[RMDB]
RNA sequence: GGGAACGACUCGAGUAGAGUCGAAAAUAGCGAAGUAGGAUUUUAUGCGUCAAGUGUUCACAGGCUGGGGAGUCGCCGUGAAACGAAAAGCAGAAAGCGUGCUGCUUACCAUAUAAUUUCCGCACCCAUAAGAAGUCUCUGUUCGCAGAGACUUCAACUCCACCAUCAUGUUCGCAUGAUGGUGGAGAAAAGAAACAACAACAACAAC
Reactivity to 2A3 in 0.01 (KOAc 150mM, MgCl2 10mM, bicine 150mM(pH8.5), 24C), signal-to-noise 2, nucleotides 027 to 156: u130a010g000c020g020a060a020g060u130a040g080g000a010u040u020u060u050a030u040g010c020g020u020c090a100a060g040u110g030u220u030c020a020c030a050g020g030c040u130g070g020g000g060a070g050u090c010g000c010c010g030u030g010a020a000a010c020g010a060a040a000a000g010c040a000g070a040a200a000g110c080g130u130g020c010u000g000c010u010u010a010c010c020a000u010a010u010a100a020u000u020u050c000c000g000c040a030c030c010c010a040u080a110a070g000a000a000g000u010c000u000c000u020g020u030u050c190g020c050a000g000a000g000a000c000u000u010c010a000a010
An RNA of 207 nucleotides, treated with 2A3 and read out base by base. 2A3 adducts were read by reverse transcription with SuperScript II with manganese. The RNA was probed in 150 mM KOAc, 10 mM MgCl2 and 150 mM bicine (pH 8.5) at 24 C.